[RMDB]
RNA sequence: GGGAACGACUCGAGUAGAGUCGAAAACCGAAUUCGUUCGGGUGUUUGAUAUGGAUUGGGAAAGCUGAUGACCUACACUGAAUGCUAUGUCGGAAACGACAUAGCGCGUGUAGCAAGGCUUUCAUAAUCCUAAGUCGGCUGUCUGGUUCGCCAGAAAGACGUACCGGUAAUUCGUUACCGGUACGUCAAAAGAAACAACAACAACAAC
Reactivity to 2A3 in 0.01 (KOAc 150mM, MgCl2 10mM, bicine 150mM(pH8.5), 24C), signal-to-noise 1, nucleotides 027 to 156: c000c000g000a010a060u280u210c250g140u060u020c010g010g090g000u110g000u090u090u300g030a010u000a050u100g030g020a030u000u000g060g000g000a000a000a000g000c020u020g020a220u070g080a180c010c000u000a000c000a010c010u180g090a240a070u220g020c000u000a000u020g000u010c000g010g000a070a040a020c000g010a000c000a020u000a000g000c000g010c000g000u000g010u000a000g010c030a040a130g010g020c000u000u000u000c000a000u010a000a000u000c000c010u000a070a000g000u000c030g010g040c080u070g030u080c000u050g020g040u050u050c180g080c080c050a020g020a080a090a060
Source information:
This 207-nucleotide RNA was probed chemically with 2A3. Values cover nucleotides 27 to 156.